[RMDB]
RNA sequence: GGGAACGACUCGAGUAGAGUCGAAAAGAUAUGGAUCCGUAUAAGACAGAUACUGGGAUCGGAAACGAUCCCAAGGUAUCAAUGACGUACGGAGUCCUAAGUCAAAAGCACGACUUCGGUCGUGCAACAAUUAAGAUAAGUUCGCUUAUCUUAAUUGAAAAGAAACAACAACAACAAC
Reactivity to 2A3 in 0.01 (KOAc 150mM, MgCl2 10mM, bicine 150mM(pH8.5), 24C), signal-to-noise 7, nucleotides 027 to 126: g000a000u010a000u030g000g000a000u000c000c000g010u000a020u010a060a110g120a140c140a130g010a010u000a000c030u070g000g000g000a000u010c000g000g010a010a010a000c010g000a010u010c010c010c010a000a010g050g000u000a000u010c010a050a300u070g010a000c010g000u000a000c000g010g020a010g070u050c000c000u000a000a000g000u000c020a030a030a080a110g000c000a000c010g010a000c010u060u090c300g100g000u000c000g000u000g000c000a000a000
Reactivity to DMS in 0.01 (KOAc 150mM, MgCl2 10mM, bicine 150mM(pH8.5), 24C), signal-to-noise 9, nucleotides 027 to 126: g000a010u000a020u010g000g000a260u000c000c000g010u000a000u000a030a190g020a270c040a030g010a010u000a000c010u000g010g000g010a010u000c000g020g000a010a010a020c000g010a010u000c000c000c010a000a010g030g020u000a000u000c000a300a180u010g000a050c040g000u000a000c000g010g000a020g000u010c000c000u000a000a080g000u000c010a080a060a100a110g010c000a000c010g010a010c000u000u010c180g020g000u000c000g030u000g000c000a020a040
Source: RMDB library TTRDEL, as collected in RNAgym. An RNA of 177 nucleotides, treated with 2A3 and DMS and read out base by base. Values cover nucleotides 27 to 126. The reactions ran in a buffer of 150 mM KOAc, 10 mM MgCl2 and 150 mM bicine (pH 8.5), at 24 C. For DMS the reverse transcriptase was MarathonRT. 2A3 is a SHAPE reagent: it acylates the 2'-hydroxyl of flexible nucleotides of all four kinds. For 2A3, 45,323 sequencing reads were counted. The DMS profile rests on 33,649 reads.